This 177-nucleotide RNA was probed chemically with DMS and 2A3. Values cover nucleotides 27 to 126.

RNA sequence: GGGAACGACUCGAGUAGAGUCGAAAAUAAGUCUAGUUCGCUAGACUUACUAUCGGGAAAUCAGCCUCCCGGCUCGAUCAGGCGGAUUCCGUCCAAGCGCUGCAACACACGUAUUCGUACGUGUGAAGAAUCUCGCAUAAUUCGUUAUGCGAGAUUCAAAAGAAACAACAACAACAAC
Reactivity to DMS in 0.01 (KOAc 150mM, MgCl2 10mM, bicine 150mM(pH8.5), 24C), signal-to-noise 3, nucleotides 027 to 126: u000a010a000g000u000c000u000a000g010u000u010c180g040c000u000a000g000a010c000u000u000a000c060u000a110u010c010g000g010g020a040a070a060u000c070a070g010c020c020u000c000c000c010g020g030c030u000c040g020a100u000c220a120g010g000c010g000g020a220u000u000c030c010g020u000c020c070a070a060g000c100g020c030u010g010c300a120a220c010a000c000a020c000g000u000a020u000u000c230g020u000a000c010g020u000g020u000g000a070a090
Reactivity to 2A3 in 0.01 (KOAc 150mM, MgCl2 10mM, bicine 150mM(pH8.5), 24C), signal-to-noise 3, nucleotides 027 to 126: u040a000a000g000u000c000u000a010g010u010u060c160g020c130u000a010g010a000c000u000u010a020c000u060a060u120c010g000g000g040a010a080a100u060c010a010g030c000c000u000c000c000c000g040g000c010u030c010g060a090u100c060a070g020g000c020g060g090a240u250u070c050c010g030u030c040c040a050a010g040c050g000c110u060g040c040a170a000c000a000c010a000c010g000u020a020u050u070c170g030u040a010c000g000u000g010u000g000a010a000
Conditions: 150 mM KOAc, 10 mM MgCl2 and 150 mM bicine (pH 8.5), 24 C.
For DMS, 2,249 sequencing reads were counted.
Source: RMDB library M2PK50, as collected in RNAgym.
DMS adducts were read by reverse transcription with MarathonRT.